Record summary:
Structure probing data (2A3 and DMS) for a 207-nucleotide construct. 2A3 adducts were read by reverse transcription with SuperScript II with manganese. The 2A3 profile rests on 4,050 reads.
RNA sequence: GGGAACGACUCGAGUAGAGUCGAAAAAUAGUGGUAUAUAAUCCAUCAACAAUGUCUACUCCAAUGACUGAAUACAUUAUCAAAAAGAACGAUAUAGUCAGAGUGUUUAACGAAUACGGAUUUGUUCUUGUAGAUAACGUUGAUUUCGCUACAAUUACAGAGAGAUACGAUUCGUCGUAUCUCUCUGAAAAGAAACAACAACAACAAC
Reactivity to 2A3 in 0.01 (KOAc 150mM, MgCl2 10mM, bicine 150mM(pH8.5), 24C), signal-to-noise 6, nucleotides 027 to 156: a000u170a040g030u040g050g000u030a080u010a040u050a200a130u050c020c010a020u080c030a020a040c020a050a140u130g040u030c000u030a030c040u010c070c030a060a080u090g040a050c020u050g030a050a020u130a120c040a050u070u070a040u110c040a000a140a090a020a080g040a050a010c030g020a020u030a010u060a170g060u040c040a020g060a060g160u080g060u060u120u130a060a060c070g040a060a010u090a040c050g040g070a050u040u040u130g020u020u010c010u010u050g020u020a020g000a030u020a040a020c050g000u010u020g050a200u040u050u060c030g000c020u080a060c080a070a150u110u000a090
Reactivity to DMS in 0.01 (KOAc 150mM, MgCl2 10mM, bicine 150mM(pH8.5), 24C), signal-to-noise 3, nucleotides 027 to 156: a140u000a060g010u000g010g030u000a140u010a140u020a240a220u000c040c030a090u010c060a040a100c070a070a180u000g010u000c010u000a070c020u000c020c080a060a100u000g000a140c050u030g010a150a070u000a030c070a040u000u000a090u000c040a050a180a120a060a070g000a030a050c060g040a060u000a050u000a060g010u000c070a070g010a280g010u000g030u000u000u010a120a070c160g020a150a070u000a120c040g010g000a170u010u010u010g000u010u000c010u000u000g010u000a130g000a020u000a030a030c120g010u020u000g000a190u000u000u010c080g000c050u010a110c030a040a080u000u000a140

Source: RMDB library OK3TST, as collected in RNAgym. 2A3 is a SHAPE reagent: it acylates the 2'-hydroxyl of flexible nucleotides of all four kinds.